[RMDB]
This 207-nucleotide RNA was probed chemically with 2A3.
Conditions: 150 mM KOAc, 10 mM MgCl2 and 150 mM bicine (pH 8.5), 24 C.
RNA sequence: GGGAACGACUCGAGUAGAGUCGAAAAGCGUACUACUGGAUACAGAGCUUGGAUUUAUACAUGCACAGAAUCCCAAAUAGGAUUCUAGCAUGUAUUGUCAGCUCUGCGGUCCAGUAUCGCAAAGGUCUGUUUCCGUCUUCGGACGGAAACAGACCAAUCCAACAUAGAGCUUCGGCUCUAUGUUGGAAAAAGAAACAACAACAACAAC
Reactivity to 2A3 in 0.01 (KOAc 150mM, MgCl2 10mM, bicine 150mM(pH8.5), 24C), signal-to-noise 1, nucleotides 027 to 156: g010c020g010u070a080c020u000a000c010u010g030g010a010u020a060c010a010g000a000g000c030u160u160g170g010a020u110u300u010a000u010a010c000a000u010g010c060a150c000a300g000a030a000u020c100c010c050a170a300a190u300a120g000g000a000u000u000c000u000a010g010c000a010u000g010u000a000u000u010g000u000c000a000g000c020u000c000u000g000c040g030g000u000c000c000a000g000u010a020u030c000g000c030a050a100a000g020g000u000c000u000g000u010u020u000c010c010g000u000c010u000u090c300g000g000a000c000g000g020a000a000a000c000a000g000a000c010c000a000a000
It was measured as part of the RMDB library RNAMAK. 2A3 adducts were read by reverse transcription with SuperScript II with manganese. The 2A3 profile rests on 882 reads.